[RMDB]
RNA sequence: GGGAACGACUCGAGUAGAGUCGAAAAGAUAUGGAUUAUAGGGAGAAGGUAUUCGGAAACGAAUACGCUUCUUUGAUCUAUACUGUCCUAAGUCAAAGGUGGCUCGUACUUCGGUACGAGCCACCAACUUACUGAUCAUCUUCGGAUGAUCAGUAAGAAAAGAAACAACAACAACAAC
Reactivity to DMS in 0.01 (KOAc 150mM, MgCl2 10mM, bicine 150mM(pH8.5), 24C), signal-to-noise 2, nucleotides 027 to 126: g000a060u000a010u020g000g010a010u000u000a060u000a040g000g000g030a010g000a050a010g000g010u010a000u000u000c010g040g000a060a060a130c000g010a010a010u000a000c000g000c000u000u000c000u000u000u000g010a050u000c010u000a010u010a010c300u010g000u000c000c010u000a040a080g000u010c040a090a100a190g030g030u000g000g000c000u010c000g000u020a010c010u000u000c190g000g040u010a010c030g010a000g010c000c010a000c000c000a020a010
An RNA of 177 nucleotides, treated with DMS and read out base by base.
The RNA was probed in 150 mM KOAc, 10 mM MgCl2 and 150 mM bicine (pH 8.5) at 24 C.
It was measured as part of the RMDB library TTRDEL.
DMS adducts were read by reverse transcription with MarathonRT.